[RMDB]
RNA sequence: GGGAACGACUCGAGUAGAGUCGAAAAGGUACAAAGUUAUAGUGACAGACAGGUACUGUUAAGAUGAGCCGUUGAGCAGGUCAACGUAGACCGGAACAUGGGCACGCGGGCAUGUUCAUUCGGUUGAAGACUCAUACGUGUUCGCACGUGUGAGUCUAAAAGAAACAACAACAACAAC
Reactivity to DMS in 0.01 (KOAc 150mM, MgCl2 10mM, bicine 150mM(pH8.5), 24C), signal-to-noise 9, nucleotides 027 to 126: g010g020u020a030c050a050a120a090g000u010u010a070u030a120g010u020g010a050c080a070g000a070c100a110g000g010u000a040c020u010g000u000u020a050a100g000a100u030g010a070g020c010c000g010u010u000g000a020g010c000a010g010g020u000c010a030a020c020g000u000a110g020a060c010c000g010g010a100a110c240a100u040g000g000g000c040a020c030g020c300g000g000g000c010a010u000g000u000u000c010a030u020u010c020g000g000u000u010g000a100
Reactivity to 2A3 in 0.01 (KOAc 150mM, MgCl2 10mM, bicine 150mM(pH8.5), 24C), signal-to-noise 8, nucleotides 027 to 126: g070g010u090a070c070a020a190a030g040u100u090a200u140a210g180u160g130a040c050a050g070a010c050a050g120g040u090a060c020u050g070u140u100a090a050g030a180u180g100a020g000c000c000g020u020u030g010a000g000c020a010g000g030u010c010a010a030c020g020u040a050g070a120c000c000g010g030a070a060c110a130u160g000g030g010c040a000c020g020c000g000g000g010c010a020u010g010u000u020c040a070u140u130c010g010g020u030u050g080a050
Structure probing data (DMS and 2A3) for a 177-nucleotide construct. For 2A3, 10,407 sequencing reads were counted. Conditions: 150 mM KOAc, 10 mM MgCl2 and 150 mM bicine (pH 8.5), 24 C. The DMS profile rests on 38,198 reads. Source: RMDB library OK1LIB, as collected in RNAgym.